RNA sequence: GGGAACGACUCGAGUAGAGUCGAAAAGAUAUGGAUAGGCAGGACAUGAGGUGGCAUCGGAAACGAUGCCGACCUCAACAGCCUGCCCUAUCCUAAGUCAAAACAUGAGGAGUUCGCUCCUCAUGAAUCUGAAUAGACUGUUCGCAGUCUAUUCAGAAAAAGAAACAACAACAACAAC
Reactivity to 2A3 in 0.01 (KOAc 150mM, MgCl2 10mM, bicine 150mM(pH8.5), 24C), signal-to-noise 4, nucleotides 027 to 126: g010a020u020a020u070g000g000a010u000a010g000g020c010a000g020g020a050c220a300u300g010a010g000g020u000g000g010c000a010u000c000g010g010a020a010a000c010g000a000u010g000c010c000g010a040c000c000u000c000a010a030c010a010g000c010c000u000g000c000c000c000u000a000u000c000c000u010a010a010g010u010c020a020a020a130a220c000a010u000g000a000g010g010a010g020u080u140c220g160c190u020c000c000u000c010a000u000g010a000a080
Reactivity to DMS in 0.01 (KOAc 150mM, MgCl2 10mM, bicine 150mM(pH8.5), 24C), signal-to-noise 4, nucleotides 027 to 126: g000a010u000a030u010g010g000a010u000a000g000g020c010a010g020g010a020c080a300u030g010a010g020g020u000g000g000c000a000u000c000g020g000a010a020a030c000g010a010u010g000c000c000g010a010c000c000u000c000a070a040c260a150g010c000c000u000g000c140c070c040u000a000u010c010c000u000a010a080g000u000c010a130a100a120a260c010a000u000g010a010g000g000a020g020u010u020c300g010c000u000c000c000u000c000a010u000g000a070a080
Chemical mapping of a 177-nucleotide RNA with 2A3 and DMS. The RNA was probed in 150 mM KOAc, 10 mM MgCl2 and 150 mM bicine (pH 8.5) at 24 C. Values are in units of 0.01, from 0 to 300, in steps of 10. DMS adducts were read by reverse transcription with MarathonRT. 2A3 adducts were read by reverse transcription with SuperScript II with manganese. It was measured as part of the RMDB library TTRDES.